[RMDB]
RNA sequence: GGGAACGACUCGAGUAGAGUCGAAAACAGGAGUACGAGUAGGCAGUGUGAUGGAAAAAGCGCCGUGAGUAGGGGUACCUAAAUUCUCUUUUGUUACCAGCUCUGCAGCCUGGGCCGCACUUGCAGCUCCUUAACCUUAGCCUAUCCAGCCACAAAACGUUGCAAAUUUAUUCGUAAAUUUGCAACGAAAAGAAACAACAACAACAAC
Reactivity to DMS in 0.01 (KOAc 150mM, MgCl2 10mM, bicine 150mM(pH8.5), 24C), signal-to-noise 1, nucleotides 027 to 156: c110a120g020g000a090g030u000a020c060g000a110g010u000a060g000g010c050a110g000u000g010u020g010a180u180g000g010a050a050a080a230a190g000c020g000c040c110g030u000g000a080g050u010a090g040g060g060g020u010a050c110c050u000a030a070a190u010u000c110u000c050u000u000u000u000g000u010u000a040c020c020a150g000c010u000c030u010g030c120a190g010c090c010u010g000g000g030c060c000g000c050a030c010u000u000g040c080a080g080c010u000c000c000u010u000a100a110c030c030u000u000a030g010c050c000u000a040u010c060c040a080g000c030c000a050c050a060a050a090a140
Reactivity to 2A3 in 0.01 (KOAc 150mM, MgCl2 10mM, bicine 150mM(pH8.5), 24C), signal-to-noise 3, nucleotides 027 to 156: c020a010g040g020a010g030u070a040c060g010a030g030u090a070g040g060c040a030g010u040g020u040g050a140u100g020g020a060a050a050a020a070g060c110g030c050c040g050u060g020a010g000u070a050g050g170g000g020u040a030c010c010u060a080a090a130u200u080c080u060c000u070u070u020u050g050u020u030a030c010c000a040g020c020u010c010u100g030c030a020g010c000c020u050g020g040g020c000c000g000c000a020c000u010u090g000c010a010g020c000u040c000c000u040u040a020a030c000c000u000u050a010g000c000c010u040a060u050c030c020a010g090c030c030a080c030a030a130a080a010
Overview
Chemical mapping of a 207-nucleotide RNA with DMS and 2A3. Values cover nucleotides 27 to 156. High 2A3 reactivity points to a flexible backbone, as in loops and unpaired stretches. For 2A3 the reverse transcriptase was SuperScript II with manganese. The RNA was probed in 150 mM KOAc, 10 mM MgCl2 and 150 mM bicine (pH 8.5) at 24 C.